[RMDB]
RNA sequence: GGGAACGACUCGAGUAGAGUCGAAAAAGAUUUCCCGAGCCGGGACGUGGCGGUUGACGGCGACGUUAGGAAGUCCGGAGACGCCGGCGGGGGCCUCGGGAAGAGUUAUCUUUUCUGCUUAACGGCCAUGCCAAAAUUUAUUCGUAAAUUUUGGCAUAAAAGAAACAACAACAACAAC
Reactivity to DMS in 0.01 (KOAc 150mM, MgCl2 10mM, bicine 150mM(pH8.5), 24C), signal-to-noise 4, nucleotides 027 to 126: a060g010a080u010u000u000c000c000c000g000a040g010c020c000g010g040g010a070c020g010u010g000g010c000g030g030u010u010g000a300c020g000g000c060g000a200c100g030u030u060a120g020g010a140a240g000u040c010c030g000g000a300g010a020c010g000c010c000g000g010c000g000g000g000g010g010c100c030u000c010g010g000g010a010a020g010a090g000u020u030a040u000c010u000u010u010u010c120u020g000c040u000u030a140a100c210g000g010c040c300
Reactivity to 2A3 in 0.01 (KOAc 150mM, MgCl2 10mM, bicine 150mM(pH8.5), 24C), signal-to-noise 5, nucleotides 027 to 126: a010g030a030u010u000u000c000c000c000g000a030g000c010c000g110g070g070a070c010g020u080g030g000c050g080g100u060u040g040a030c010g020g010c040g010a060c080g100u100u130a070g120g120a200a030g030u030c000c000g000g000a060g000a020c000g000c000c020g010g020c020g020g000g000g000g000c040c030u010c000g000g000g000a010a000g020a000g000u090u120a090u050c010u050u040u030u030c050u060g080c020u060u060a090a030c050g030g010c010c020